[RMDB]
The record gives the reactivity of an RNA of 177 nucleotides to DMS and 2A3. Reactivities are given for positions 27 through 126. The RNA was probed in 150 mM KOAc, 10 mM MgCl2 and 150 mM bicine (pH 8.5) at 24 C. 2A3 adducts were read by reverse transcription with SuperScript II with manganese.
RNA sequence: GGGAACGACUCGAGUAGAGUCGAAAAUAUCGGAAGGAACGCCGGUGGCGAAAGCGACACGCUGGGGCCUGUCUGACGCUGAGGCACGAAAGCCAGGGUAGCGAACGGGAUUAGAUACCCCGGUAGUCUAAUGCUCAUACUUCGGUAUGAGCAUUAGAAAAGAAACAACAACAACAAC
Reactivity to DMS in 0.01 (KOAc 150mM, MgCl2 10mM, bicine 150mM(pH8.5), 24C), signal-to-noise 4, nucleotides 027 to 126: u040a070u010c040g020g010a070a090g000g010a100a170c110g000c040c020g010g000u040g000g010c030g020a040a090a060g010c050g000a110c160a060c110g010c030u000g000g040g000g000c080c010u010g010u000c010u020g010a080c040g010c060u000g000a230g010g000c030a090c110g010a070a100a060g000c020c010a050g000g000g000u020a030g000c040g020a080a050c060g010g010g000a100u030u010a110g000a100u030a190c090c000c000c020g000g010u020a020g020u000
Reactivity to 2A3 in 0.01 (KOAc 150mM, MgCl2 10mM, bicine 150mM(pH8.5), 24C), signal-to-noise 5, nucleotides 027 to 126: u170a040u040c010g030g030a040a030g040g040a060a040c050g020c040c010g050g020u060g020g020c060g050a090a030a010g080c040g050a050c030a020c080g000c020u030g000g010g030g020c000c010u010g060u020c030u050g040a020c000g010c040u050g010a110g060g000c030a020c190g130a090a020a010g000c020c000a000g020g020g060u070a020g010c010g020a060a030c030g010g030g000a020u050u080a050g050a050u130a080c000c000c000c010g020g010u040a050g030u000